[RMDB]
RNA sequence: GGGAACGACUCGAGUAGAGUCGAAAAGCUCUGGUGCCUAAGGCCAAGAGCCAUGUGACGGUAGUUGCGGUGCUCGGGGUACUCGGCGUAUUUCUGAUGGUCUCGGCGACGUUUAACAAGCCCAGCGCUUAGCCUCAGCGUUCGCGCUGAGGCUAAGAAAAGAAACAACAACAACAAC
Reactivity to DMS in 0.01 (KOAc 150mM, MgCl2 10mM, bicine 150mM(pH8.5), 24C), signal-to-noise 1, nucleotides 027 to 126: g000c020u010c020u000g010g070u010g030c010c010u010a140a180g030g010c010c020a170a030g010a020g020c030c050a070u010g030u000g020a050c060g030g000u000a080g020u010u010g000c040g010g000u010g010c060u010c060g010g010g000g060u000a050c080u000c300g000g000c180g010u000a070u000u000u000c040u000g030a040u030g010g000u000c040u000c150g010g020c030g030a070c130g000u010u000u030a100a030c200a080a160g000c030c000c010a120g010c120g010